RNA sequence: GGGAACGACUCGAGUAGAGUCGAAAAGCGCGCCGCGGAGGACCGGAUGAGGGCGCGCGCGGAGAAGGUGGCGGACGUGGCUGCGGCCACCGAGGAGGCGCUGCGUGAGAGGCUGCCGUUUGUGGAGGCAUUAUGCGACGUUCGCGUCGCAUAAUGCAAAAGAAACAACAACAACAAC
Reactivity to DMS in 0.01 (KOAc 150mM, MgCl2 10mM, bicine 150mM(pH8.5), 24C), signal-to-noise 1, nucleotides 027 to 126: g040c000g060c000g040c000c030g040c090g060g030a120g040g000a110c100c070g000g000a080u000g030a300g000g000g040c000g000c010g000c000g000c050g000g010a110g000a100a030g040g000u000g070g000c020g020g000a080c100g030u000g000g020c020u000g080c140g000g000c020c030a050c080c020g000a090g020g070a110g000g010c120g000c020u000g000c050g000u000g010a110g010a210g000g010c070u090g080c000c070g000u000u040u030g030u020g000g000a170g010
Reactivity to 2A3 in 0.01 (KOAc 150mM, MgCl2 10mM, bicine 150mM(pH8.5), 24C), signal-to-noise 1, nucleotides 027 to 126: g020c010g030c000g010c020c030g010c030g030g100a050g160g000a150c010c030g080g020a130u260g010a170g000g040g000c030g000c000g030c000g000c050g090g060a100g010a040a110g030g020u060g040g010c000g000g000a050c010g050u030g040g000c020u130g040c040g020g000c000c000a020c000c010g000a000g000g050a000g000g070c030g000c090u020g000c000g020u100g090a110g010a050g000g000c040u070g000c000c000g060u070u090u080g100u040g000g000a060g030